Annotation: Structure probing data (DMS and 2A3) for a 177-nucleotide construct. Values cover nucleotides 27 to 126. For 2A3, 2,493 sequencing reads were counted.

RNA sequence: GGGAACGACUCGAGUAGAGUCGAAAACGAGGGGUGGUCCUGCGGGCGCGAGGAAGGACACCCGAAGAAAGGAAGGGUGAAAACCCUGUUUCGGCGGGAAUUACUCCUGUCGGCCGCUGGGCACUCCGAUAGCUAAAUCGUUCGCGAUUUAGCUAUCAAAAGAAACAACAACAACAAC
Reactivity to DMS in 0.01 (KOAc 150mM, MgCl2 10mM, bicine 150mM(pH8.5), 24C), signal-to-noise 2, nucleotides 027 to 126: c070g010a150g000g020g020g020u000g010g020u010c010c010u000g000c010g020g000g010c010g000c060g020a100g000g010a060a020g010g010a190c300a070c000c000c000g000a030a010g010a010a030a060g000g020a100a020g000g000g000u000g000a120a050a090a040c000c000c010u000g020u000u000u000c000g010g010c020g000g000g000a040a060u010u020a100c030u010c000c000u000g010u010c000g000g010c010c010g000c010u000g000g000g010c000a030c030u000c010c040
Reactivity to 2A3 in 0.01 (KOAc 150mM, MgCl2 10mM, bicine 150mM(pH8.5), 24C), signal-to-noise 2, nucleotides 027 to 126: c050g020a130g000g010g000g020u090g060g100u100c000c000u020g000c030g000g050g040c020g000c010g070a040g020g010a160a050g010g000a010c020a010c000c020c000g000a010a000g030a010a000a000g130g170a070a030g010g000g000u000g010a020a030a030a050c010c000c020u010g030u010u030u000c020g020g000c020g020g020g030a070a060u140u070a060c000u030c010c000u040g090u070c010g000g080c000c010g000c010u010g000g000g010c000a010c000u040c000c010